[RMDB]
RNA sequence: GGGAACGACUCGAGUAGAGUCGAAAAGCGGACGGAACACCGCAGUUUCUGGUGCUCGAAGGUCGACUCCAGGGACGCCGUCUGUGUCGGCGAGCCCACACACACCAACACGGGCCGCAGGCGGGCCCAUCCGUACCCUUUUCGAAGGGUACGGAUGAAAAGAAACAACAACAACAAC
Reactivity to 2A3 in 0.01 (KOAc 150mM, MgCl2 10mM, bicine 150mM(pH8.5), 24C), signal-to-noise 9, nucleotides 027 to 126: g030c010g000g020a040c030g040g050a150a050c090a040c070c040g010c030a010g000u000u010u000c010u020g030g010u040g040c110u020c030g100a240a110g180g140u150c010g010a010c010u000c010c010a010g000g000g010a010c020g010c010c000g010u000c020u030g070u030g060u050c030g020g020c030g030a070g020c010c050c000a010c000a000c000a000c000a040c030c060a150a090c070a060c160g010g000g000c000c000g010c010a010g030g030c020g000g020g000c000c010
Reactivity to DMS in 0.01 (KOAc 150mM, MgCl2 10mM, bicine 150mM(pH8.5), 24C), signal-to-noise 7, nucleotides 027 to 126: g040c010g000g000a030c020g000g000a140a100c150a090c050c050g040c060a140g010u000u000u010c010u010g010g010u000g010c120u010c010g010a230a150g010g020u020c000g000a040c010u000c010c010a060g000g000g000a020c010g000c000c000g000u000c010u000g000u000g010u010c040g010g010c030g010a180g000c000c010c010a130c120a100c160a100c170a110c220c140a070a100c190a100c170g000g000g000c000c040g000c050a070g000g010c030g000g000g010c020c020